[RMDB]
RNA sequence: GGGAACGACUCGAGUAGAGUCGAAAACCAACACGUCACUUGUGAAACCGAUCUAGGAAUUACCCGCGACGGCGAACUUGUCCUGAUUCACGACAAGACGGUUGACCGCACCACCAACGGCCACGGUAUCAUAAUCCGCGUUCGCGCGGAUUAUGAUAAAAGAAACAACAACAACAAC
Reactivity to DMS in 0.01 (KOAc 150mM, MgCl2 10mM, bicine 150mM(pH8.5), 24C), signal-to-noise 1, nucleotides 027 to 126: c000c000a090a240c170a030c100g000u030c000a100c190u000u090g020u000g010a060a110a130c000c000g000a080u000c040u000a260g000g000a100a120u040u000a060c110c010c040g010c100g030a050c030g020g000c080g020a090a100c050u000u000g020u000c170c050u030g000a040u000u030c060a090c170g040a270c070a110a030g000a080c030g000g060u000u000g000a150c050c000g000c000a070c060c000a000c090c030a120a070c000g000g000c000c020a020c020g000g070u000
Reactivity to 2A3 in 0.01 (KOAc 150mM, MgCl2 10mM, bicine 150mM(pH8.5), 24C), signal-to-noise 2, nucleotides 027 to 126: c000c030a020a010c070a020c030g050u000c020a040c090u100u080g050u060g090a080a020a020c030c000g030a130u020c030u020a040g020g030a080a050u070u060a100c030c000c070g000c030g060a070c000g060g000c020g030a080a010c020u030u040g020u060c000c000u130g050a210u040u120c110a070c110g020a020c030a020a080g050a020c030g030g030u020u080g000a000c000c030g010c020a030c020c000a020c000c050a050a050c000g030g030c020c000a030c010g010g020u050